[RMDB]
RNA sequence: GGGAACGACUCGAGUAGAGUCGAAAAGCAAAUAUUGUCUUACUUACUUAGGCUAAAAGAAAUAAGUAUUAAAGCGGGACAAGGCAUCGACAUUUGAUACAAAUAUUGAUCAAUGGAUGUCUUAUUUAAACCUCAUCCGGCUUCGGCCGGAUGAGAACGUUAAUGGUAACUUCGGUUACCAUUAACGAAAAGAAACAACAACAACAAC
Reactivity to 2A3 in 0.01 (KOAc 150mM, MgCl2 10mM, bicine 150mM(pH8.5), 24C), signal-to-noise 4, nucleotides 027 to 156: g050c020a040a040a060u180a110u130u090g020u020c030u030u050a080c000u040u000a010c000u040u050a070g040g040c030u180a190a060a040a030g040a020a130a030u050a040a030g020u000a010u070u140a080a070a030g040c060g040g000g030a020c030a020a010g010g000c000a000u000c030g120a130c040a030u090u110u170g020a020u150a110c070a030a200a070u260a140u180u270g010a000u000c000a000a010u020g020g010a000u000g000u000c000u000u000a030u000u050u020a050a050a020c020c000u000c000a000u000c000c000g010g000c010u040u090c090g090g010c000c010g000g000a000u000g000a000g000a000a000
Reactivity to DMS in 0.01 (KOAc 150mM, MgCl2 10mM, bicine 150mM(pH8.5), 24C), signal-to-noise 2, nucleotides 027 to 156: g020c050a020a030a140u000a080u000u000g020u000c020u040u010a070c030u010u010a070c050u010u010a090g010g020c080u010a100a090a140a160g000a110a120a110u000a060a090g010u010a070u010u000a050a050a090g040c050g020g000g010a020c020a000a000g020g030c010a020u010c010g050a100c030a040u000u000u000g020a070u000a080c050a070a100a240u020a120u000u010g000a090u010c020a030a070u000g000g010a030u000g000u000c030u000u010a020u000u000u000a050a050a090c050c010u000c000a010u000c000c010g020g000c010u010u000c300g030g060c000c000g000g000a010u010g020a010g000a000a050